[RMDB]
RNA sequence: GGGAACGACUCGAGUAGAGUCGAAAACUGAACACGACAAUUCUGACGCCCAAUGGGAAUGAAGACACCACAGCUGGUGGGAAAUCUGGGACUGGAGGGGGCUGGUGAGAAGGGUGGCUGUGGGAAGAUGUAUUUACCGUUUCGACGGUAAAUACAUAAAAGAAACAACAACAACAAC
Reactivity to DMS in 0.01 (KOAc 150mM, MgCl2 10mM, bicine 150mM(pH8.5), 24C), signal-to-noise 2, nucleotides 027 to 126: c040u000g030a070a050c090a090c070g000a130c070a120a130u000u010c030u000g030a150c200g010c000c020c060a090a110u010g070g000g000a050a050u000g000a130a060g000a100c090a090c070c020a040c090a100g020c060u000g020g010u000g000g000g000a040a130a070u010c070u000g000g010g010a070c130u000g000g020a130g020g000g020g000g000c110u000g060g000u020g000a090g000a110a080g020g010g020u000g040g000c130u010g000u000g000g000g000a040a050g000
Reactivity to 2A3 in 0.01 (KOAc 150mM, MgCl2 10mM, bicine 150mM(pH8.5), 24C), signal-to-noise 1, nucleotides 027 to 126: c040u030g030a030a000c030a010c120g160a000c050a030a040u060u000c000u080g070a040c070g050c000c020c000a010a080u190g020g070g010a070a040u120g030a060a050g050a010c050a030c060c010a020c020a010g060c100u100g010g020u070g020g040g030a050a160a030u100c060u040g020g000g090a100c100u070g020g090a100g030g070g000g080g040c080u100g010g110u130g030a130g040a060a040g020g030g020u070g010g060c060u070g030u070g000g000g020a000a020g070